[RMDB]
RNA sequence: GGGAACGACUCGAGUAGAGUCGAAAACCACUUCACCCAUCAUAGAAGAACUCCUACACUUUCACGAUCACACCUUAAUAAUCGUAUUCUUAAUCAGCUCUUUAGUGUUAUAUAUCAUUUCACUCAUACUAACAACAAAACUGACACACACUAGCACCCGAUAAGAAUCGUUCGCGAUUCUUAUCGGAAAAGAAACAACAACAACAAC
Reactivity to 2A3 in 0.01 (KOAc 150mM, MgCl2 10mM, bicine 150mM(pH8.5), 24C), signal-to-noise 6, nucleotides 027 to 156: c010c010a060c000u070u060c050a070c010c030c000a070u080c030a040u050a110g060a100a010g020a060a060c010u030c010c010u050a050c060a040c070u080u100u110c040a030c050g020a060u040c020a020c020a030c070c030u110u110a100a020u130a100a040u170c020g020u040a100u070u070c040u030u080a080a080u080c020a010g010c000u030c000u110u060u070a030g000u020g040u100u010a090u020a030u010a010u140c050a040u030u110u070c030a030c040u040c010a030u050a120c040u090a150a060c060a050a000c010a020a070a070a100c050u040g080a010c000a000c010a000c000a010c100u030a030g010c030a020c000
Reactivity to DMS in 0.01 (KOAc 150mM, MgCl2 10mM, bicine 150mM(pH8.5), 24C), signal-to-noise 2, nucleotides 027 to 156: c030c020a140c070u000u040c040a100c050c020c000a130u000c050a100u000a110g010a080a100g000a080a060c030u000c010c040u030a080c070a040c030u000u010u020c030a060c000g020a110u010c020a110c040a080c080c040u010u010a110a050u010a060a070u000c060g000u010a100u000u010c010u020u000a110a070u000c020a060g010c020u000c030u000u000u000a080g030u000g010u000u000a050u010a080u000a080u000c050a100u000u000u010c050a080c070u020c080a050u010a110c100u000a060a060c020a030a140c060a090a030a040a030c030u000g030a060c020a060c080a110c050a070c070u000a080g020c050a080c140

This 207-nucleotide RNA was probed chemically with 2A3 and DMS. Values cover nucleotides 27 to 156. For 2A3 the reverse transcriptase was SuperScript II with manganese. For 2A3, 4,079 sequencing reads were counted.